[RMDB]
Source: RMDB library OK2TRN, as collected in RNAgym. An RNA of 177 nucleotides, treated with DMS and 2A3 and read out base by base. The reactions ran in a buffer of 150 mM KOAc, 10 mM MgCl2 and 150 mM bicine (pH 8.5), at 24 C.
RNA sequence: GGGAACGACUCGAGUAGAGUCGAAAACGUCUUCUUGUGAAGGGUGCUGUUGAGAGUAUACUGGAACGGAGUUCACACGUACAGCUUGCAGAUGGAUCAGUUGUUCCAAUAGAUGAACCAUCCAGACUCAUAAGUCCGUAUUCGUACGGACUUAUGAAAAAGAAACAACAACAACAAC
Reactivity to DMS in 0.01 (KOAc 150mM, MgCl2 10mM, bicine 150mM(pH8.5), 24C), signal-to-noise 5, nucleotides 027 to 126: c080g010u010c040u000u000c020u000u010g020u000g000a110a070g000g000g010u000g010c030u000g010u000u000g010a120g000a110g010u000a070u000a200c030u010g000g010a070a060c100g010g010a100g020u000u000c050a050c090a090c110g010u000a060c060a050g010c040u000u000g030c100a070g010a120u000g000g010a090u010c040a040g000u000u000g010u000u000c030c050a060a120u000a090g000a100u000g000a050a040c040c040a090u000c020c060a060g010a180c200
Reactivity to 2A3 in 0.01 (KOAc 150mM, MgCl2 10mM, bicine 150mM(pH8.5), 24C), signal-to-noise 5, nucleotides 027 to 126: c010g040u010c040u050u020c030u100u270g070u070g070a040a060g050g000g010u060g010c010u030g010u170u110g070a070g000a010g080u070a050u040a160c030u030g000g070a120a040c070g100g010a070g030u090u070c040a030c010a010c070g040u080a040c010a030g010c020u050u150g060c080a050g020a280u150g060g040a070u080c030a030g040u060u020g020u050u070c020c000a020a060u120a070g100a150u090g040a020a020c010c000a000u020c020c000a030g030a080c020